[RMDB]
This 177-nucleotide RNA was probed chemically with DMS.

RNA sequence: GGGAACGACUCGAGUAGAGUCGAAAAUAUGGCUUGAGGACGUCAGGUCUUUGGAGUACACGGGUGUGCUAGAUAAUAAGAAGAUUUUCCAUAGAUCAAAGUUCAACGACAGAAUUGGAAUAUAUAGACAAGACUCGAAAUUCGUUUCGAGUCUUGUAAAAGAAACAACAACAACAAC
Reactivity to DMS in 0.01 (KOAc 150mM, MgCl2 10mM, bicine 150mM(pH8.5), 24C), signal-to-noise 1, nucleotides 027 to 126: u020a100u010g010g030c020u000u000g030a110g010g000a050c080g020u010c130a040g000g000u000c010u000u010u010g060g010a130g020u000a020c070a070c020g010g000g000u000g000u000g020c030u010a070g020a130u000a030a030u020a100a130g000a120a040g010a050u000u000u000u010c060c030a040u010a130g040a040u000c040a070a050a170g010u000u000c050a040a120c160g010a050c130a060g040a080a110u010u010g000g020a020a030u000a070u020a100u010a130g050